[RMDB]
RNA sequence: GGGAACGACUCGAGUAGAGUCGAAAAUAGACGUUCAGGUAUGGUCGUUACUAAGAGUCUACUCUACAACAGCAAGGUUGCAGUUGAUAGCAUGUAUGAAAGACGCAACUGGUUUUAUGCCUUUGGCCAAAGUCAGUUGAUUCGUCAACUGACUUUGAAAAGAAACAACAACAACAAC
Reactivity to 2A3 in 0.01 (KOAc 150mM, MgCl2 10mM, bicine 150mM(pH8.5), 24C), signal-to-noise 6, nucleotides 027 to 126: u070a000g030a010c020g040u090u040c080a040g120g100u150a120u120g090g040u040c030g020u030u040a100c030u070a100a020g040a010g150u010c000u010a040c010u010c010u050a040c020a060a010c020a040g070c020a050a080g140g010u080u070g030c040a080g030u050u030g070a030u060a040g070c110a090u150g070u290a110u140g140a120a060a040g040a020c040g010c030a010a010c020u010g030g030u050u050u020u080a090u140g030c030c000u030u100u230g010g000c000
Reactivity to DMS in 0.01 (KOAc 150mM, MgCl2 10mM, bicine 150mM(pH8.5), 24C), signal-to-noise 9, nucleotides 027 to 126: u000a070g010a050c040g010u010u000c030a100g010g010u000a050u000g010g010u000c060g010u000u000a050c060u010a070a300g000a110g000u000c020u000a060c040u000c010u000a030c050a050a140c230a060g020c100a080a110g010g010u000u010g010c020a060g010u000u000g010a100u000a090g010c140a070u010g010u000a070u010g010a090a070a170g010a070c070g010c030a010a030c030u000g010g000u000u000u000u000a070u010g010c010c010u000u000u000g020g010c100